Description:
Conditions: 150 mM KOAc, 10 mM MgCl2 and 150 mM bicine (pH 8.5), 24 C. Chemical mapping of a 177-nucleotide RNA with 2A3.

[RMDB]
RNA sequence: GGGAACGACUCGAGUAGAGUCGAAAAGCAGAAGGGACACUUUUGGUGCCGUGGCAUCUCUUGGCAGAGAAGUCUAAUUUCACUGCUAACUUGCUUUGUGAGGGUGCAUUUGUGACAAGAAGAACAACCUCUUCGUGCGAUUCGUCGCACGAAGAGGAAAAGAAACAACAACAACAAC
Reactivity to 2A3 in 0.01 (KOAc 150mM, MgCl2 10mM, bicine 150mM(pH8.5), 24C), signal-to-noise 1, nucleotides 027 to 126: g090c260a080g020a120a120g050g010g000a000c000a000c060u110u040u290u300g000g000u000g030c000c000g070u080g000g060c050a110u050c050u000c000u050u080g070g000c000a000g020a000g060a000a080g070u000c020u180a030a100u000u170u000c020a060c050u050g000c020u070a130a000c000u070u180g040c000u130u090u000g000u000g000a030g030g050g000u000g000c070a070u160u190u060g110u000g080a030c160a120a010g010a020a000g050a030a000c000a030a030